This 207-nucleotide RNA was probed chemically with DMS and 2A3. The RNA was probed in 150 mM KOAc, 10 mM MgCl2 and 150 mM bicine (pH 8.5) at 24 C. 2A3 adducts were read by reverse transcription with SuperScript II with manganese. DMS adducts were read by reverse transcription with MarathonRT.
[RMDB]
RNA sequence: GGGAACGACUCGAGUAGAGUCGAAAAACGGCGAGUACGCUCGCCGAAGCACGGUGCGGCGAGCCUAAAUAGUGCCUUAGGCCGCACGCGUUAUGCAUAGGUGGCAAGACCAGCUACGGCUGGUCAAAAAACAAGUAUACCUUCGGGUAUACUUGAACAACAUGCUUGUGUUCGCACAAGCAUGUUGAAAAGAAACAACAACAACAAC
Reactivity to DMS in 0.01 (KOAc 150mM, MgCl2 10mM, bicine 150mM(pH8.5), 24C), signal-to-noise 1, nucleotides 027 to 156: a060c010g000g020c010g010a010g040u000a100c240g000c010u010c020g060c000c000g000a080a080g020c030a010c060g030g010u010g070c010g080g050c000g020a080g020c020c060u000a100a080a160u000a110g020u000g020c090c170u000u000a070g040g000c000c000g060c000a020c000g020c000g030u010u000a050u000g020c010a180u000a130g040g010u000g010g060c080a070a250g010a010c010c000a040g000c000u010a030c250g090g010c000u000g020g000u010c000a000a000a050a160a050a050c000a010a000g010u000a010u010a000c010c010u000u040c300g020g000g010u010a000u000a000c020u020u010g000a050a110
Reactivity to 2A3 in 0.01 (KOAc 150mM, MgCl2 10mM, bicine 150mM(pH8.5), 24C), signal-to-noise 1, nucleotides 027 to 156: a000c020g020g000c030g000a010g010u050a040c180g060c050u000c000g030c020c000g000a000a000g020c000a000c040g030g000u020g010c000g000g000c020g040a030g000c030c010u130a190a180a130u250a070g040u060g100c000c000u020u030a100g050g000c010c010g020c000a030c030g140c000g050u050u070a100u210g010c040a050u040a090g070g050u000g030g040c000a020a090g000a000c000c000a010g000c000u010a010c140g060g010c000u010g000g020u000c000a050a000a000a000a000a000c000a000a000g000u000a000u000a000c000c000u000u040c180g040g000g000u010a000u000a000c010u010u000g010a000a020